An RNA of 177 nucleotides, treated with 2A3 and DMS and read out base by base. DMS adducts were read by reverse transcription with MarathonRT. The reactions ran in a buffer of 150 mM KOAc, 10 mM MgCl2 and 150 mM bicine (pH 8.5), at 24 C.
RNA sequence: GGGAACGACUCGAGUAGAGUCGAAAAAAGGCAGGGCGUCCAAGUCUCGCAGUAUUGCAUUCCUCUGUACGUUAGCUAUCAUGGUUAACAGCCUAGCGACCGAGCCUUUGCAGCGUGCUUCGGGUUCCCAUUACAACGCUUUCGAGCGUUGUAAUGGAAAAGAAACAACAACAACAAC
Reactivity to 2A3 in 0.01 (KOAc 150mM, MgCl2 10mM, bicine 150mM(pH8.5), 24C), signal-to-noise 8, nucleotides 027 to 126: a000a000g050g010c030a020g030g040g000c010g010u030c050c010a030a040g030u010c010u010c050g010c010a030g040u180a100u150u140g030c030a030u040u030c000c010u020c030u040g040u030a050c040g010u020u040a030g000c010u020a030u290c040a120u200g040g030u110u060a050a050c030a060g010c010c000u030a020g010c010g020a020c010c010g020a020g020c000c020u050u060u070g030c040a040g010c030g080u080g010c020u040u070c020g030g000g020u030u050c020
Reactivity to DMS in 0.01 (KOAc 150mM, MgCl2 10mM, bicine 150mM(pH8.5), 24C), signal-to-noise 5, nucleotides 027 to 126: a070a020g000g030c000a160g000g010g000c040g010u000c050c060a070a110g000u010c010u000c100g040c040a050g020u020a070u020u010g000c040a090u020u000c030c020u010c060u010g010u020a060c090g000u000u020a050g010c020u000a090u040c200a080u000g000g020u010u010a060a050c110a120g000c060c030u000a040g010c050g020a100c050c030g000a120g000c050c020u000u000u000g000c090a060g000c070g010u000g000c030u000u010c040g010g000g000u000u000c050